[RMDB]
RNA sequence: GGGAACGACUCGAGUAGAGUCGAAAACAUCCAGUGUUCGCACUGGAUGAGAGGAAUGUGGAUCGGCAAACUACAUAGCAAAAGCUGAGCUCGAAAGAGCAACGAUUUCGUCGUUCGCGACGAAAAAGCAUGUAAUAGGUUUCGACCUAUUACAUGCAAAAGAAACAACAACAACAAC
Reactivity to DMS in 0.01 (KOAc 150mM, MgCl2 10mM, bicine 150mM(pH8.5), 24C), signal-to-noise 6, nucleotides 027 to 126: c010a010u000c000c000a010g010u000g010u000u000c220g010c010a020c010u000g000g000a000u010g010a060g010a110g000g010a070a060u010g010u000g000g000a050u000c040g010g000c080a080a070a090c080u000a070c090a050u000a070g010c080a070a040a070a120g000c040u010g010a180g010c000u000c010g000a080a090a090g000a020g000c020a060a060c180g000a190u000u000u000c000g010u000c000g010u000u010c180g020c010g010a010c010g000a000a010a030a080a110
Reactivity to 2A3 in 0.01 (KOAc 150mM, MgCl2 10mM, bicine 150mM(pH8.5), 24C), signal-to-noise 9, nucleotides 027 to 126: c000a000u000c000c000a010g000u010g030u050u100c230g040c100a000c000u010g020g000a000u010g000a010g000a010g020g100a130a070u100g020u060g030g040a090u070c050g050g020c060a050a080a040c050u120a030c040a150u140a050g070c050a050a100a080a030g030c050u080g040a020g020c000u000c010g040a080a060a030g000a000g000c010a020a030c040g060a070u010u020u020c000g000u000c000g010u020u050c240g000c010g050a010c000g000a030a010a000a000a000